[RMDB]
RNA sequence: GGGAACGACUCGAGUAGAGUCGAAAAGAAAGAAAAGAAACUUCCGAUGUAGACCCGUAUUCUACGCAUGUACGACGGGUCGGUUUUAGUACAGGCGAUUUCUUCGCGCGAAAAUAGAAGAAAGAAACGUAAUGGCGAUAUUCGUAUCGCCAUUACGAAAAGAAACAACAACAACAAC
Reactivity to 2A3 in 0.01 (KOAc 150mM, MgCl2 10mM, bicine 150mM(pH8.5), 24C), signal-to-noise 2, nucleotides 027 to 126: g060a030a090a000g140a060a220a020a070g040a000a100a080c000u120u000c000c000g080a090u130g000u110a010g000a050c000c020c030g000u040a130u020u150c030u010a000c010g000c170a070u160g030u060a000c080g010a030c000g020g000g000u010c000g000g000u000u020u000u060a020g000u010a050c030a010g040g150c010g030a030u020u000u000c000u000u030c000g010c000g010c050g190a100a000a090a200u120a010g000a090a000g000a000a000a150g080a070a060a000
Reactivity to DMS in 0.01 (KOAc 150mM, MgCl2 10mM, bicine 150mM(pH8.5), 24C), signal-to-noise 3, nucleotides 027 to 126: g020a110a040a130g000a120a050a080a140g000a080a100a100c130u000u010c000c020g040a050u020g010u010a240g010a000c000c000c000g010u000a090u040u010c050u010a030c040g010c230a060u020g010u000a010c210g010a020c010g010g020g000u020c030g000g000u000u010u030u040a120g000u000a100c190a120g000g010c010g000a120u050u000u010c020u000u000c000g010c090g010c030g020a000a010a000a010u000a080g010a020a000g000a020a100a130g000a100a110a160